[RMDB]
RNA sequence: GGGAACGACUCGAGUAGAGUCGAAAACGAUGGGGGCUGUAUGGAUGAGCCGCGAGUUCAAUCGAUACGAUAGCGAUCUAUCUGAGCGCAAAGCUGAGUCGGACCGUUCUCAAACUUACCUUUCAUCGAUCUACGGACGCAUGCCUCAGUGGAUGCGGGAUGAUUCCAUGUUCGCAUGGAAUCAUCCAAAAGAAACAACAACAACAAC
Reactivity to 2A3 in 0.01 (KOAc 150mM, MgCl2 10mM, bicine 150mM(pH8.5), 24C), signal-to-noise 2, nucleotides 027 to 156: c040g010a020u030g000g010g010g000g000c080u060g000u060a040u040g100g030a010u020g010a010g030c010c010g060c090g030a080g010u080u040c040a080a120u000c050g050a010u040a090c040g040a050u080a040g030c070g090a020u040c020u010a000u000c010u040g050a030g060c030g000c090a070a110a080g000c030u050g000a010g030u060c070g000g040a010c000c020g010u070u010c030u050c030a130a150a100c030u100u130a060c020c000u060u080u100c030a070u050c040g020a020u000c070u100a070c100g010g010a010c000g000c010a000u100g170c000c000u060c030a060g000u070g060g000a030u040g020c000g000